RNA sequence: GGGAACGACUCGAGUAGAGUCGAAAAUUACUUAUGCACCGAAUUCGACUAUUUCGCAUUCAUUAGUGAUAGACGUGAAUCAACAAAUCCAAGGGGUGUAGAUAGUUUAUAAUUUAUCUUGUAACGCCGAUAGCCAACUCUUCGGAGUUGGCUAUCGAAAAGAAACAACAACAACAAC
Reactivity to 2A3 in 0.01 (KOAc 150mM, MgCl2 10mM, bicine 150mM(pH8.5), 24C), signal-to-noise 2, nucleotides 027 to 126: u000u010a020c000u010u010a020u100g040c000a060c020c030g050a090a040u020u050c020g030a000c000u130a160u000u110u200c160g030c140a040u010u100c000a030u000u210a090g000u150g030a040u000a070g130a120c070g050u030g070a000a120u120c000a060a040c040a060a110a010u070c060c000a080a080g060g000g010g000u010g000u000a000g000a030u050a000g000u000u180u110a160u080a050a050u050u070u010a170u110c080u030u070g010u000a040a010c040g000c010
Reactivity to DMS in 0.01 (KOAc 150mM, MgCl2 10mM, bicine 150mM(pH8.5), 24C), signal-to-noise 1, nucleotides 027 to 126: u000u040a000c150u000u000a150u000g000c060a050c000c000g000a220a030u020u000c210g050a100c190u020a080u000u000u000c120g000c110a000u000u010c000a060u000u020a100g010u030g020a060u000a010g040a020c240g030u030g000a010a150u030c100a060a020c120a080a050a050u060c000c080a150a070g000g000g030g020u010g000u000a010g000a030u000a020g000u020u000u030a000u000a070a080u000u020u000a010u020c060u020u020g010u000a080a060c150g000c200